[RMDB]
RNA sequence: GGGAACGACUCGAGUAGAGUCGAAAACACAAUUCUCUAAGCGAUGAGAAGCGUGUGGAAAAUUAGGGAACGGCUACGGCUAUAAUCCUAAGAAAGCUUAUCUACAAGCGGAGGUAUUCUCAGAACGAAAACCAUUUGGCGUUCGCGCCAAAUGGAACAUAAUAAACUUGUUCGCAAGUUUAUUAUGAAAAGAAACAACAACAACAAC
Reactivity to 2A3 in 0.01 (KOAc 150mM, MgCl2 10mM, bicine 150mM(pH8.5), 24C), signal-to-noise 6, nucleotides 027 to 156: c030a000c010a040a100u060u030c020u000c020u080a220a180g140c090g130a120u090g010a070g010a020a010g020c040g020u050g000u080g030g010a090a120a030a040u030u020a020g010g000g010a070a040c060g020g000c010u030a010c150g040g000c010u020a020u080a210a060u060c010c010u000a020a010g060a050a050a000g000c010u050u060a060u110c040u100a100c060a150a000g020c020g040g030a020g040g040u090a110u100u010c020u000c010a050g060a100a030c080g050a060a060a060a060c000c000a000u000u000u000g000g000c000g020u040u060c220g000c010g000c040c000a000a000a000u000g000g000a000a000
Reactivity to DMS in 0.01 (KOAc 150mM, MgCl2 10mM, bicine 150mM(pH8.5), 24C), signal-to-noise 4, nucleotides 027 to 156: c020a040c020a060a160u000u000c010u010c010u010a110a170g030c120g000a300u000g010a060g030a040a040g020c220g040u010g030u000g010g020a070a050a120a140u000u000a070g010g040g020a110a060c120g000g010c030u010a110c240g100g010c020u000a080u000a090a140u000c000c000u020a040a060g010a110a100a130g010c040u000u000a080u000c040u010a110c040a040a070g010c040g030g020a080g020g010u000a110u000u000c020u000c030a050g000a100a090c040g010a080a060a100a140c000c000a040u000u000u000g020g020c020g020u000u000c300g030c020g020c000c000a000a000a010u000g000g020a020a060

Chemical mapping of a 207-nucleotide RNA with 2A3 and DMS.
The 2A3 profile rests on 5,124 reads.
For DMS, 7,447 sequencing reads were counted.
It was measured as part of the RMDB library M2RFPK.